[RMDB]
RNA sequence: GGGAACGACUCGAGUAGAGUCGAAAACAGGAAACUGGUUAAUCGUUUUCCUUAGUAGUAUAGCGGAAACCAUAAAUAAGAAGAACUCUAAGUGCUUGAGUAGAGUUAAAAUAAUUAGACAGGCAAUUAAGGUACUCCACGUUCGCGUGGAGUACAAGAUACAGGGUUUCUUCGGAAACCCUGUAUCAAAAGAAACAACAACAACAAC
Reactivity to 2A3 in 0.01 (KOAc 150mM, MgCl2 10mM, bicine 150mM(pH8.5), 24C), signal-to-noise 2, nucleotides 027 to 156: c040a000g050g080a080a040a020c070u190g050g020u150u100a150a080u180c000g020u020u010u030u080c020c000u060u010a020g010u000a000g000u000a080u050a140g040c010g050g120a000a040a080c010c000a030u080a180a120a020u160a150a020g050a080a010g050a050a000c000u000c000u010a000a020g020u030g270c010u010u000g010a000g000u000a000g020a000g000u040u170a000a020a000a000u060a020a020u290u010a000g010a010c010a010g000g030c010a000a070u190u170a130a050g060g000u000a000c000u000c000c000a010c010g000u020u080c200g020c030g080u000g000g000a000g000u010a000c000a010a000
The data come from the RNA Mapping Database (RMDB), library M2RFPK. Chemical mapping of a 207-nucleotide RNA with 2A3. For 2A3 the reverse transcriptase was SuperScript II with manganese. Values are in units of 0.01, from 0 to 300, in steps of 10. The RNA was probed in 150 mM KOAc, 10 mM MgCl2 and 150 mM bicine (pH 8.5) at 24 C. The 2A3 profile rests on 1,227 reads.